The record gives the reactivity of an RNA of 177 nucleotides to DMS. For DMS, 872 sequencing reads were counted. Source: RMDB library OK2TST, as collected in RNAgym. Values cover nucleotides 27 to 126.

RNA sequence: GGGAACGACUCGAGUAGAGUCGAAAAUGUGUGAUAAUAUUCAGGACAUGUUAGGCGAUUUGUUUACUCCCAUAGAGACACCAGAAGCCCAAAAUAGAGGCUUUCUCAAGGGACUAUUUGGUGGAAGACGGUCUAUCAUGUUCGCAUGAUAGACCGUAAAAGAAACAACAACAACAAC
Reactivity to DMS in 0.01 (KOAc 150mM, MgCl2 10mM, bicine 150mM(pH8.5), 24C), signal-to-noise 1, nucleotides 027 to 126: u010g020u010g030u010g000a080u000a070a070u010a070u010u010c030a090g020g000a120c050a010u000g000u000u000a040g010g030c060g000a080u010u000u010g040u000u030u000a110c060u010c000c030c030a160u030a100g020a130g010a280c020a020c000c010a030g030a040a020g010c000c000c020a080a100a070a110u040a180g020a040g020g020c250u020u000u020c000u000c000a080a100g000g010g000a040c030u000a090u000u000u010g000g000u000g000g000a120a140g000